[RMDB]
RNA sequence: GGGAACGACUCGAGUAGAGUCGAAAAGAUAUGGAUUGACCCGACUUUUGACGCUCGCGGUCGGAAACGACUGAGAGCGAUAAGUCGCAAUCCUAAGUCAAAACAGCCUCCGUUCGCGGAGGCUGAAUCUAACGAUACAGUUCGCUGUAUCGUUAGAAAAAGAAACAACAACAACAAC
Reactivity to 2A3 in 0.01 (KOAc 150mM, MgCl2 10mM, bicine 150mM(pH8.5), 24C), signal-to-noise 4, nucleotides 027 to 126: g000a010u020a010u060g010g000a010u020u040g090a180c050c070c080g000a020c040u130u130u170u300g300a250c080g010c000u010c000g040c000g000g000u000c010g010g010a010a010a000c010g000a000c000u010g020a000g000a010g060c000g000a000u040a020a000g000u000c000g010c000a000a000u020c000c000u010a020a000g010u010c010a000a020a130a200c010a020g000c010c000u030c020c000g030u060u090c300g000c000g130g000a000g000g000c000u000g000a000a010
Reactivity to DMS in 0.01 (KOAc 150mM, MgCl2 10mM, bicine 150mM(pH8.5), 24C), signal-to-noise 5, nucleotides 027 to 126: g010a010u000a110u010g000g000a010u000u000g000a170c220c210c070g000a010c010u000u000u000u000g020a190c030g020c000u000c000g000c000g010g000u000c000g010g000a010a020a040c000g010a020c000u000g000a030g000a020g020c000g020a020u000a010a020g010u000c000g010c010a010a000u010c000c000u000a010a120g000u000c010a090a080a140a220c000a000g000c000c000u000c000c000g020u000u020c240g030c010g020g010a010g010g010c000u000g000a020a060